An RNA of 207 nucleotides, treated with 2A3 and DMS and read out base by base. 2A3 adducts were read by reverse transcription with SuperScript II with manganese.
RNA sequence: GGGAACGACUCGAGUAGAGUCGAAAAGUUAAUGCCUUGGCAAAUUCAGAAUUCUAAGUAGACAGGAAGCAUAGGUUUUCAUUAAUCUUCUGAUUAUGGUAGUUACUUCUUAAGAAUUUUAUGCCACAUUUAAGAUUUAAUUUCAGCCUUGUAUAUGCGAAAUCAUUGAGUUCGCUCAAUGAUUUCGAAAAGAAACAACAACAACAAC
Reactivity to 2A3 in 0.01 (KOAc 150mM, MgCl2 10mM, bicine 150mM(pH8.5), 24C), signal-to-noise 2, nucleotides 027 to 156: g020u040u030a050a060u040g010c090c040u020u020g020g000c000a030a130a250u140u100c040a060g010a060a040u050u000c020u010a060a000g000u040a050g050a080c030a120g030g040a040a020g000c060a070u140a170g100g030u040u060u070u120c030a050u020u180a100a030u000c030u180u020c050u100g030a060u030u060a030u090g080g020u000a070g040u060u060a030c000u040u060c000u050u130a160a070g000a000a020u010u060u070u070a040u060g000c030c000a020c020a020u080u060u040a040a030g050a020u060u040u170a090a060u040u100u080c070a060g020c030c030u070u090g120u090a130u110a050u300g110
Reactivity to DMS in 0.01 (KOAc 150mM, MgCl2 10mM, bicine 150mM(pH8.5), 24C), signal-to-noise 1, nucleotides 027 to 156: g050u010u000a050a070u010g000c040c060u020u010g040g010c030a060a080a140u000u000c100a150g020a120a070u000u010c020u020a070a100g020u020a070g000a170c030a080g000g000a030a050g000c070a100u010a040g030g010u000u000u000u020c110a070u010u000a040a030u000c000u000u030c130u010g020a060u010u010a060u000g000g020u020a120g010u000u000a070c020u000u010c050u000u010a090a210g010a060a080u000u000u010u010a070u020g060c010c020a050c030a050u020u000u010a070a060g000a260u000u000u010a050a070u000u010u010c050a080g030c050c030u000u000g010u010a070u000a100u000g020